[RMDB]
RNA sequence: GGGAACGACUCGAGUAGAGUCGAAAAUCGCGUUGGCUGCCUAAUUCAAGGAAUUAGCGUGCCUUCAUGCUAAGGGUUUGAUAUCUGCUAAAACCCGGUGCAUUCAUCAAUGCAGGUUAAGCGAAAGAAACGGCUCACGAAUUCGUUCGUGAGCCAACAUCUCUUAAGAGUUCGCUCUUAAGAGAUGAAAAGAAACAACAACAACAAC
Reactivity to DMS in 0.01 (KOAc 150mM, MgCl2 10mM, bicine 150mM(pH8.5), 24C), signal-to-noise 3, nucleotides 027 to 156: u000c020g030c030g020u000u000g010g040c020u000g010c100c010u000a020a030u000u010c030a140a190g020g030a080a040u000u000a000g010c050g000u000g010c010c010u000u000c030a070u000g000c010u000a300a190g000g010g010u000u000u000g000a190u010a030u010c040u010g010c050u000a130a020a020a030c000c020c000g020g040u000g020c010a060u000u000c080a070u010c130a100a130u020g010c010a030g010g010u000u000a060a140g010c040g010a080a080a210g010a080a090a160c120g000g010c000u000c010a010c000g010a050a100u000u010c290g010u010u000c020g020u000g000a020g000c000c000a000a020
Reactivity to 2A3 in 0.01 (KOAc 150mM, MgCl2 10mM, bicine 150mM(pH8.5), 24C), signal-to-noise 3, nucleotides 027 to 156: u080c020g000c010g050u050u010g010g020c050u100g070c040c030u020a000a020u010u000c100a230a190g180g020a070a040u000u010a010g030c050g030u020g020c000c040u000u050c020a040u060g020c000u020a020a030g000g000g000u010u000u000g000a030u020a040u040c020u050g020c010u020a000a010a040a040c000c010c020g000g000u050g000c010a070u050u270c050a080u110c080a140a140u190g030c010a000g030g000u030u110a110a050g040c050g100a080a120a030g110a050a100a010c110g000g010c000u010c000a010c020g020a000a050u080u090c150g020u110u000c000g010u020g000a010g000c010c000a000a000